[RMDB]
RNA sequence: GGGAACGACUCGAGUAGAGUCGAAAAAGCUCGGGCUUCGGGGUCGCCGGCGCACUGGCAAUAGUGCGGCGCACUUACAACAGUGCGGGGCAGGUCUUACCCGCUCGUUGCACAUGCGACGUGCGUCCGCCCUUGCGUCGUUCGCGACGCGAGGGCGAAAAGAAACAACAACAACAAC
Reactivity to DMS in 0.01 (KOAc 150mM, MgCl2 10mM, bicine 150mM(pH8.5), 24C), signal-to-noise 1, nucleotides 027 to 126: a110g000c020u000c010g000g020g000c010u030u030c080g010g020g000g020u010c020g030c010c050g000g000c020g000c010a020c010u020g000g030c040a170a070u030a020g010u000g000c060g000g010c070g000c000a010c000u000u010a110c250a150a110c120a020g000u000g000c020g070g000g000g000c040a000g000g000u010c120u030u040a090c010c000c000g040c000u000c000g040u010u000g000c000a080c050a070u010g050c030g000a070c140g000u000g000c000g000u010c010
Reactivity to 2A3 in 0.01 (KOAc 150mM, MgCl2 10mM, bicine 150mM(pH8.5), 24C), signal-to-noise 2, nucleotides 027 to 126: a000g080c010u010c020g000g130g000c020u120u050c070g010g000g000g000u030c030g000c040c000g000g000c000g000c000a010c020u060g060g000c020a050a080u080a110g000u000g030c010g010g000c030g000c000a030c000u070u170a040c080a190a030c050a110g000u000g000c000g000g000g020g000c080a110g000g020u070c040u110u180a090c000c000c000g000c000u020c000g020u020u110g000c000a020c010a000u020g000c020g020a000c000g000u000g000c000g020u000c000
Chemical mapping of a 177-nucleotide RNA with DMS and 2A3. It was measured as part of the RMDB library OK1LIB. The RNA was probed in 150 mM KOAc, 10 mM MgCl2 and 150 mM bicine (pH 8.5) at 24 C. DMS adducts were read by reverse transcription with MarathonRT. For 2A3 the reverse transcriptase was SuperScript II with manganese.